[RMDB]
RNA sequence: GGGAACGACUCGAGUAGAGUCGAAAAGAUAUGGAUAUAUGGAGGCCUAUGAAUGCGAAGAACUCGGAAACGAGGGAGCAUCAUAGGUGAAGUAUAUCCUAAGUCAAAAGGCAGCUUCGGCUGCCAACCUAUUGCCAAGGUUCGCCUUGGCAAUAGGAAAAGAAACAACAACAACAAC
Reactivity to DMS in 0.01 (KOAc 150mM, MgCl2 10mM, bicine 150mM(pH8.5), 24C), signal-to-noise 1, nucleotides 027 to 126: g000a070u020a300u010g020g000a020u000a000u000a030u000g000g000a220g000g020c000c000u000a010u000g000a060a080u020g000c000g000a120a160g000a130a140c000u000c010g020g000a110a030a190c000g000a010g050g000g000a060g020c000a000u000c000a020u000a000g020g010u010g000a100a090g000u000a020u000a000u000c000c000u010a030a070g020u000c040a070a040a160a130g010g010c000a000g000c000u000u010c200g000g010c000u000g000c000c010a030a010
Reactivity to 2A3 in 0.01 (KOAc 150mM, MgCl2 10mM, bicine 150mM(pH8.5), 24C), signal-to-noise 2, nucleotides 027 to 126: g020a000u100a030u160g010g010a010u000a000u000a010u050g010g050a060g170g300c010c000u010a030u050g120a300a060u000g060c000g120a300a010g000a070a020c020u010c020g010g080a060a030a060c010g010a000g030g010g010a010g000c010a030u010c010a000u000a010g000g000u040g000a000a000g000u000a000u010a000u000c000c010u000a040a010g030u000c020a000a000a090a240g000g000c000a000g000c010u070u210c300g170g000c000u000g000c000c000a010a020

Annotation:
The data come from the RNA Mapping Database (RMDB), library TTRDEL. Structure probing data (DMS and 2A3) for a 177-nucleotide construct. Conditions: 150 mM KOAc, 10 mM MgCl2 and 150 mM bicine (pH 8.5), 24 C. DMS adducts were read by reverse transcription with MarathonRT. For 2A3 the reverse transcriptase was SuperScript II with manganese.